[RMDB]
RNA sequence: GGGAACGACUCGAGUAGAGUCGAAAAUGACGACCUUGCAGCCAUCGACCGUGAGGGCAACGCUACCGUGUCCUCGCUUGCUCGACAGGCGACGGCACUACGGAAGCUGACCGACACAGGUAGCUUCGCGACCAUAGGUAUUCGUACCUAUGGUCGCAAAAGAAACAACAACAACAAC
Reactivity to 2A3 in 0.01 (KOAc 150mM, MgCl2 10mM, bicine 150mM(pH8.5), 24C), signal-to-noise 6, nucleotides 027 to 126: u220g040a030c090g040a090c020c000u020u110g020c060a020g030c010c020a080u090c040g060a090c010c020g020u070g050a050g000g010g000c020a100a040c060g030c070u060a070c040c030g000u000g010u030c010c000u000c000g000c000u000u050g010c040u110c220g110a190c040a030g010g010c010g000a010c030g010g010c040a040c060u210a050c060g050g010a060a040g040c030u050g100a170c010c010g100a100c070a030c010a100g030g000u020a010g010c000u050u050c060
Reactivity to DMS in 0.01 (KOAc 150mM, MgCl2 10mM, bicine 150mM(pH8.5), 24C), signal-to-noise 2, nucleotides 027 to 126: u010g020a140c120g000a140c010c010u000u030g000c070a100g010c060c000a160u020c050g000a100c010c080g000u020g010a100g010g000g000c060a040a040c190g060c040u000a120c000c000g070u000g010u000c060c010u000c000g000c000u000u020g000c050u060c070g020a120c000a040g030g020c030g000a060c130g000g060c090a070c040u020a010c080g000g010a040a060g000c030u000g000a060c040c040g000a130c080a050c180a090g000g000u000a020g000c070u020u020c220